[RMDB]
RNA sequence: GGGAACGACUCGAGUAGAGUCGAAAAGCUUUCCGUUUCGACGGAAAGCAAAGGCAAGUACAUGAGAGAUCAAAGAUCACUCAGAAAAGGCGUACUAAAGAAAAAUCAAUCUGUUCGCAGAUUGAAACGAUAUACUACCUUUCGAGGUAGUAUAUCGAAAAGAAACAACAACAACAAC
Reactivity to DMS in 0.01 (KOAc 150mM, MgCl2 10mM, bicine 150mM(pH8.5), 24C), signal-to-noise 6, nucleotides 027 to 126: g010c000u000u000u000c000c000g010u010u000u010c170g020a030c000g000g000a010a000a000g020c010a010a040a070g010g020c130a100a030g010u000a020c050a170u010g000a020g000a070g020a010u000c020a130a140a180g010a020u000c000a060c000u000c010a030g010a070a090a120a120g010g020c130g000u000a030c030u010a060a080a140g000a030a060a080a100a110u000c000a020a000u000c000u000g000u000u010c160g020c000a000g000a000u000u000g010a020a050a110
Reactivity to 2A3 in 0.01 (KOAc 150mM, MgCl2 10mM, bicine 150mM(pH8.5), 24C), signal-to-noise 7, nucleotides 027 to 126: g010c000u000u000u000c000c010g000u030u000u120c200g120a020c000g000g010a010a010a000g010c000a020a050a010g040g010c080a050a020g030u030a020c040a080u070g000a000g000a000g000a020u020c090a300a160a040g020a010u010c010a040c020u010c010a010g160a030a170a030a020g160g020c090g030u020a010c040u120a050a130a050g110a030a110a030a010a020u010c000a010a000u000c000u010g040u050u070c250g000c070a000g000a000u000u010g000a030a020a000